[RMDB]
RNA sequence: GGGAACGACUCGAGUAGAGUCGAAAAACGUUGAUAUGGAUUUACUCCGAGGAGACGAACUACCACGAACAGGGGUAACUCUACCCGUGGCGUCUCCGUUUGACGAGUAAGUCCUAAGUCAACAUGCGUGCAAGUGACUUCGGUCACUUGAAAAGAAACAACAACAACAAC
Reactivity to 2A3 in 0.01 (KOAc 150mM, MgCl2 10mM, bicine 150mM(pH8.5), 24C), signal-to-noise 8, nucleotides 027 to 129: a000c060g000u000u010g000a000u020a010u090g000g000a000u000u000u000a000c000u000c010c010g010a040g000g000a010g020a000c000g010a040a020c080u180a070c080c010a010c020g030a110a020c050a080g020g010g000g020u060a080a050c010u020c010u050a040c020c010c010g000u000g000g000c010g000u000c000u010c000c000g010u050u040u070g010a000c010g000a000g000u000a000a000g000u000c000c000u010a020a000g010u000c000a000a000c000a010u090g080c070g050u090g030
Reactivity to DMS in 0.01 (KOAc 150mM, MgCl2 10mM, bicine 150mM(pH8.5), 24C), signal-to-noise 7, nucleotides 027 to 129: a030c160g010u020u000g030a000u020a300u060g000g000a030u010u010u010a050c000u020c000c000g000a000g020g010a000g010a000c000g000a100a060c090u080a250c000c020a000c000g010a070a230c160a050g020g010g020g000u050a090a100c000u000c020u000a040c180c090c000g010u000g000g000c000g020u000c000u000c020c000g020u000u050u070g020a160c300g000a000g000u000a000a000g000u030c010c000u000a000a010g030u010c020a000a000c020a070u030g030c030g010u070g020